[RMDB]
RNA sequence: GGGAACGACUCGAGUAGAGUCGAAAAGAGACUCGGGGGCCUGGGAUCCCCCAUUUAGCCAUAGGGCGGGGGGAUCAGGUUCAGCCUCUGAAAGUCCAGAGCACGAUGUUUGGGAAACGGCCCCGCAACCAUCAUUAAUGUUCGCAUUAAUGAUGGUAAAAGAAACAACAACAACAAC
Reactivity to 2A3 in 0.01 (KOAc 150mM, MgCl2 10mM, bicine 150mM(pH8.5), 24C), signal-to-noise 3, nucleotides 027 to 126: g030a000g000a000c010u000c050g020g010g010g020g000c020c070u050g020g100g000a030u000c010c020c010c000c000a000u060u070u130a010g000c000c010a170u250a230g260g020g020c000g000g000g000g010g020g000a010u010c010a000g000g000u120u070c010a010g010c000c000u040c000u000g070a250a060a010g020u000c040c010a000g000a010g080c110a020c100g040a050u090g080u070u060u070g070g000g000a040a100a020c020g040g000c000c000c000c000g000c020a010
Reactivity to DMS in 0.01 (KOAc 150mM, MgCl2 10mM, bicine 150mM(pH8.5), 24C), signal-to-noise 6, nucleotides 027 to 126: g010a190g010a040c020u000c100g010g010g010g000g010c050c050u000g010g010g010a050u000c000c000c000c000c000a020u000u000u020a150g010c010c010a260u010a130g020g020g030c000g010g010g010g010g010g010a020u000c000a030g010g010u010u010c100a110g010c020c010u000c000u010g010a060a100a100g000u000c010c020a120g000a120g010c090a080c080g010a110u000g000u010u010u000g010g000g010a080a060a070c050g000g010c010c000c010c200g000c210a130
Description:
The record gives the reactivity of an RNA of 177 nucleotides to 2A3 and DMS. For 2A3, 5,160 sequencing reads were counted. For DMS the reverse transcriptase was MarathonRT. The reactions ran in a buffer of 150 mM KOAc, 10 mM MgCl2 and 150 mM bicine (pH 8.5), at 24 C. The DMS profile rests on 8,218 reads. As a SHAPE reagent, 2A3 marks flexible, mostly unpaired nucleotides at the ribose 2'-OH.